This 177-nucleotide RNA was probed chemically with 2A3. For 2A3 the reverse transcriptase was SuperScript II with manganese. Conditions: 150 mM KOAc, 10 mM MgCl2 and 150 mM bicine (pH 8.5), 24 C.
RNA sequence: GGGAACGACUCGAGUAGAGUCGAAAAGCACUAGGCAAUAUCUAAUAUCACAUAUACAUGUCUUUCUUCCAUAACGUAAACCAAGCAUUCAUCUUAGAUUCAAUCCUAUUCGAGAAUCAAGCGUCGAAUGAAACGAGCUGUUCGCAGCUCGUUUCAUAAAAGAAACAACAACAACAAC
Reactivity to 2A3 in 0.01 (KOAc 150mM, MgCl2 10mM, bicine 150mM(pH8.5), 24C), signal-to-noise 2, nucleotides 027 to 126: g060c030a000c070u040a020g040g090c000a010a000u010a080u160c060u090a110a040u100a040u130c060a060c070a100u150a000u120a090c070a060u090g050u010c000u100u140u000c000u110u000c050c000a160u100a130a020c040g060u050a030a120a100c000c020a010a010g020c000a010u000u030c010a020u110c040u040u030a020g020a030u100u070c020a060a170u060c000c000u120a110u090u010c060g000a000g000a130a080u110c060a090a000g090c020g090u070c030g050a060